[RMDB]
RNA sequence: GGGAACGACUCGAGUAGAGUCGAAAAAUAAACCGCGUAGGGAACCAAGCCUUGAGUUCUGGAGACCCACGGUACAAGGCUUGGUUCUAGACAUCUGGGUCUCCAGUCCCACUCCCUACGCCAAAAACUACGUGUAUAGUUUCGACUAUACACGUAGAAAAGAAACAACAACAACAAC
Reactivity to 2A3 in 0.01 (KOAc 150mM, MgCl2 10mM, bicine 150mM(pH8.5), 24C), signal-to-noise 3, nucleotides 027 to 126: a010u090a020a060a020c060c050g000c010g010u010a010g020g000g010a020a000c010c000a020a010g020c010c020u130u090g190a080g080u130u090c080u150g030g000a010g000a010c000c000c020a020c070g090g020u200a200c020a010a000g000g000c010u020u030g000g000u010u000c010u000a000g000a020c040a100u060c090u090g000g000g000u010c000u000c000c000a010g030u010c000c010c000a060c070u050c000c000c000u000a010c000g000c010c000a040a110a020a010a030
Reactivity to DMS in 0.01 (KOAc 150mM, MgCl2 10mM, bicine 150mM(pH8.5), 24C), signal-to-noise 4, nucleotides 027 to 126: a080u000a040a080a130c160c180g010c030g010u000a010g000g000g020a110a050c010c020a020a020g000c020c010u010u000g010a210g010u000u010c110u000g020g000a020g000a050c020c000c020a080c140g020g010u010a080c020a040a030g000g000c000u000u000g000g000u000u000c070u010a030g010a150c190a070u000c130u020g010g000g000u000c000u000c010c020a110g010u000c000c020c010a130c260u000c010c000c000u010a020c010g010c020c190a030a060a040a080a060
Source information:
Structure probing data (2A3 and DMS) for a 177-nucleotide construct. It was measured as part of the RMDB library M2PK90. The reactions ran in a buffer of 150 mM KOAc, 10 mM MgCl2 and 150 mM bicine (pH 8.5), at 24 C.